[RMDB]
RNA sequence: GGGAACGACUCGAGUAGAGUCGAAAACACCAAAGCAUGGGGUCAGAUACCUUGAUAUUUUCUUGCUUGGCUUCUUUGAAAUGGAAAGGACUAAAGAUAAGUAUGGAAGUAUUAGUGAUCUAGAUGACCCCCUCAUAACUUUCGAGUUAUGAGGGGGAAAAGAAACAACAACAACAAC
Reactivity to DMS in 0.01 (KOAc 150mM, MgCl2 10mM, bicine 150mM(pH8.5), 24C), signal-to-noise 2, nucleotides 027 to 126: c160a150c050c020a080a110a160g000c150a050u020g000g000g000g000u010c030a080g000a090u000a020c110c020u020u010g030a050u000a010u000u000u010u010c000u000u000g010c060u000u000g000g020c100u010u000c040u000u000u000g000a140a080a080u020g020g010a070a050a020g010g030a100c130u000a030a060a080g000a070u000a020a030g010u010a050u030g000g010a000a000g010u000a000u000u000a030g000u000g000a050u000c050u000a070g030a180u000g000a180
Reactivity to 2A3 in 0.01 (KOAc 150mM, MgCl2 10mM, bicine 150mM(pH8.5), 24C), signal-to-noise 2, nucleotides 027 to 126: c090a000c010c000a060a070a000g060c010a080u070g020g050g000g020u030c010a020g020a090u100a150c010c000u010u040g030a050u000a020u090u110u010u020c020u060u070g040c000u010u020g060g000c020u040u000c000u040u060u160g290a250a250a060u160g020g090a030a060a020g090g050a040c080u210a130a000a050g020a060u110a050a000g040u040a020u090g000g020a000a000g000u010a020u020u030a030g040u020g080a000u000c000u000a090g000a240u060g030a050
Structure probing data (DMS and 2A3) for a 177-nucleotide construct. DMS adducts were read by reverse transcription with MarathonRT. It was measured as part of the RMDB library OK2TRN.